[RMDB]
RNA sequence: GGGAACGACUCGAGUAGAGUCGAAAAGUGAGCCAAUUAGGAAUUCAUGAUGUUCAGAAAGUAACUCAGGCAUUGAAUCUUUUUGGACUUAAAGAACACAAGGAUUAUGUAUUAGAAGGAAAUGAAAAUAGUGUUACACGUUCGCGUGUAACACUAUAAAAGAAACAACAACAACAAC
Reactivity to 2A3 in 0.01 (KOAc 150mM, MgCl2 10mM, bicine 150mM(pH8.5), 24C), signal-to-noise 1, nucleotides 027 to 126: g110u080g030a020g020c030c030a090a100u160u110a140g020g010a010a090u120u050c020a000u130g040a020u080g020u050u000c000a030g080a030a060a020g020u050a020a030c040u000c070a020g290g080c100a090u070u080g000a030a070u100c000u000u070u020u000u010g000g000a010c000u080u080a140a090a010g120a140a000c010a000c020a090a090g070g020a020u140u000a060u240g080u030a030u100u070a050g080a120a020g060g050a070a050a000u050g000a000a110a150
Reactivity to DMS in 0.01 (KOAc 150mM, MgCl2 10mM, bicine 150mM(pH8.5), 24C), signal-to-noise 2, nucleotides 027 to 126: g040u010g020a060g010c020c030a080a090u000u000a090g000g000a080a100u000u000c030a080u000g010a080u010g020u000u000c030a080g010a070a020a030g010u040a090a100c080u000c040a040g000g010c140a130u000u010g000a040a080u000c010u000u010u010u010u000g000g030a050c010u000u000a100a070a080g000a030a050c060a050c120a040a070g000g000a080u010u040a130u010g000u010a020u000u020a080g000a110a070g000g000a060a070a050u020g000a060a100a070